Source information: The record gives the reactivity of an RNA of 207 nucleotides to DMS and 2A3. Values are in units of 0.01, from 0 to 300, in steps of 10. The data come from the RNA Mapping Database (RMDB), library OK3TST.
RNA sequence: GGGAACGACUCGAGUAGAGUCGAAAAAACGUCCGUGAGAGCCUACCCAUGACCAACAUGAGGGCACCGAUCAUCUCGCUGGCUCGCCUCAUCCUGGCCCCCAACCCCUAUAUCCUAGAGGGACAGCUGACGGUGGGCAUGACACAGGACAACGGCAACAUAGUCAAUGUUUCGACAUUGACUAUGUAAAAGAAACAACAACAACAAC
Reactivity to DMS in 0.01 (KOAc 150mM, MgCl2 10mM, bicine 150mM(pH8.5), 24C), signal-to-noise 3, nucleotides 027 to 156: a080a080c050g020u010c010c030g060u000g000a090g000a150g040c000c000u000a100c030c020c010a120u000g010a160c050c050a090a130c040a140u000g000a090g000g000g010c060a060c090c050g030a090u000c070a130u000c090u000c050g000c120u010g020g000c020u000c020g010c010c020u000c010a090u000c010c010u000g040g000c020c000c000c010c040a080a210c000c000c010c030u000a110u000a140u010c170c080u000a080g000a080g010g000g010a050c060a040g000c050u000g010a060c090g020g000u020g010g020g050c010a060u000g020a190c080a090c010a080g000g020a080c040a060a070c030g010g000c020a140
Reactivity to 2A3 in 0.01 (KOAc 150mM, MgCl2 10mM, bicine 150mM(pH8.5), 24C), signal-to-noise 3, nucleotides 027 to 156: a000a030c040g010u000c010c000g000u030g010a170g000a010g000c010c000u030a030c010c010c010a040u080g060a130c040c050a050a120c010a070u030g020a130g030g010g020c060a060c050c060g060a100u090c020a060u060c100u000c070g050c070u080g020g000c030u040c060g080c000c000u020c010a020u050c010c040u050g070g030c000c000c000c000c000a020a110c020c010c010c000u050a040u030a030u220c010c020u020a030g040a110g080g000g020a020c040a040g020c030u080g020a030c030g000g000u040g030g010g000c010a010u100g010a010c030a000c020a070g000g030a000c020a020a020c020g020g000c010a030